An RNA of 177 nucleotides, treated with DMS and 2A3 and read out base by base. The RNA was probed in 150 mM KOAc, 10 mM MgCl2 and 150 mM bicine (pH 8.5) at 24 C. The data come from the RNA Mapping Database (RMDB), library OK2TRN. DMS adducts were read by reverse transcription with MarathonRT.

RNA sequence: GGGAACGACUCGAGUAGAGUCGAAAACGACAUAUAUGUUGUCGCCAGGGCUAUCUCAAGAGGGGCUCCUCUAUGAAUUGGAGAGCAUAUCAAGGAAUGCAUUUUCGAUAUACAGAGCCGUCGAGGAACCUGAGUACCAGUUCGCUGGUACUCAGGUAAAAGAAACAACAACAACAAC
Reactivity to DMS in 0.01 (KOAc 150mM, MgCl2 10mM, bicine 150mM(pH8.5), 24C), signal-to-noise 2, nucleotides 027 to 126: c010g020a040c000a060u000a090u010a060u030g010u000u000g030u010c010g000c070c080a130g000g010g020c040u000a060u010c050u000c020a050a120g020a070g010g020g020g030c070u000c030c030u000c050u010a080u030g000a090a090u010u010g000g000a020g010a070g010c010a040u010a050u010c090a050a180g000g000a070a070u000g010c040a090u000u000u000u000c010g020a040u000a120u000a040c030a230g020a050g010c010c000g050u000c020g000a160g020g010a080
Reactivity to 2A3 in 0.01 (KOAc 150mM, MgCl2 10mM, bicine 150mM(pH8.5), 24C), signal-to-noise 1, nucleotides 027 to 126: c010g020a000c030a000u150a000u050a020u280g170u120u040g020u030c000g000c050c020a030g060g030g000c020u050a070u060c030u050c080a090a040g040a040g050g030g060g100c010u030c010c000u000c020u000a150u120g170a200a060u150u040g010g000a050g020a010g080c020a010u030a010u070c070a110a010g120g050a110a080u030g010c060a060u040u010u030u000c020g000a000u000a000u000a140c030a000g000a000g000c010c010g050u040c020g000a070g000g110a040